[RMDB]
Source information:
Structure probing data (DMS and 2A3) for a 177-nucleotide construct. The data come from the RNA Mapping Database (RMDB), library OK1LIB. For DMS, 3,152 sequencing reads were counted. Conditions: 150 mM KOAc, 10 mM MgCl2 and 150 mM bicine (pH 8.5), 24 C. For 2A3 the reverse transcriptase was SuperScript II with manganese.
RNA sequence: GGGAACGACUCGAGUAGAGUCGAAAAGAGCUAAUAUCUACUUCGUUUGUGCAUAUCACUAUAGGGAAGCUGAUGGGUUGCGAGAAAUCGCAGUGCCUAGUGGAAUGAACGGCGUUCAAGCCUCGAAGGGAUUAGAAUUCUUCGGAAUUCUAAUCCCAAAAGAAACAACAACAACAAC
Reactivity to DMS in 0.01 (KOAc 150mM, MgCl2 10mM, bicine 150mM(pH8.5), 24C), signal-to-noise 2, nucleotides 027 to 126: g010a090g040c040u000a130a070u020a070u030c030u020a040c040u000u000c090g000u040u030u010g000u000g000c060a030u000a110u020c050a030c050u000a110u030a100g000g010g000a040a050g000c070u050g000a050u010g000g000g050u040u020g000c010g000a020g020a070a090a100u000c000g040c030a020g000u020g060c000c010u020a060g000u000g020g000a060a050u000g020a030a030c100g020g010c050g010u040u000c140a020a080g000c010c020u000c030g030a080a110
Reactivity to 2A3 in 0.01 (KOAc 150mM, MgCl2 10mM, bicine 150mM(pH8.5), 24C), signal-to-noise 4, nucleotides 027 to 126: g040a000g010c060u100a040a050u070a110u170c020u050a040c030u050u050c050g110u000u040u160g040u000g000c020a030u060a030u170c020a020c080u050a050u120a120g130g020g060a060a020g050c050u040g020a070u060g010g040g020u060u020g000c010g000a000g000a000a090a020u000c010g000c010a010g030u110g090c000c000u010a000g050u030g070g080a100a020u040g000a050a000c060g040g000c020g090u120u130c070a080a000g020c000c000u010c010g020a060a090